The record gives the reactivity of an RNA of 177 nucleotides to DMS and 2A3. Conditions: 150 mM KOAc, 10 mM MgCl2 and 150 mM bicine (pH 8.5), 24 C.
[RMDB]
RNA sequence: GGGAACGACUCGAGUAGAGUCGAAAAGCAUCUUGCUUCGGCAAGAUGCAAAUAACGGUCAGUGCUUGCAGCUAGUCGUAAAUGCUUACUGGCCUUACGCUAAAACGAAUGCGUUCGCGCAUUCGAACUAUUGCCAUUCGUUCGCGAAUGGCAAUAGAAAAGAAACAACAACAACAAC
Reactivity to DMS in 0.01 (KOAc 150mM, MgCl2 10mM, bicine 150mM(pH8.5), 24C), signal-to-noise 2, nucleotides 027 to 126: g000c000a020u020c000u000u000g000c000u000u000c210g010g000c000a000a020g000a010u000g010c000a020a040a080u010a060a100c280g040g010u000c020a010g010u000g020c170u010u010g000c010a070g030c210u010a080g010u010c160g000u000a060a090a130u000g000c000u000u010a020c020u010g010g000c000c000u000u010a010c190g010c100u010a020a050a130a120c020g010a010a000u010g010c010g020u010u000c170g010c000g040c000a010u000u010c000g000a030a080
Reactivity to 2A3 in 0.01 (KOAc 150mM, MgCl2 10mM, bicine 150mM(pH8.5), 24C), signal-to-noise 3, nucleotides 027 to 126: g000c010a000u010c000u020u000g000c010u030u050c150g080g000c000a000a000g010a000u010g000c000a000a000a000u010a020a010c050g010g000u010c010a010g020u010g090c090u070u100g020c010a030g020c050u230a080g150u150c040g050u030a080a100a070u100g010c020u020u080a030c000u010g000g000c000c010u000u050a050c070g030c070u140a070a040a040a070c020g010a010a000u000g010c000g010u040u050c220g000c010g020c070a000u000u010c000g000a010a010

Overview: The DMS profile rests on 1,931 reads.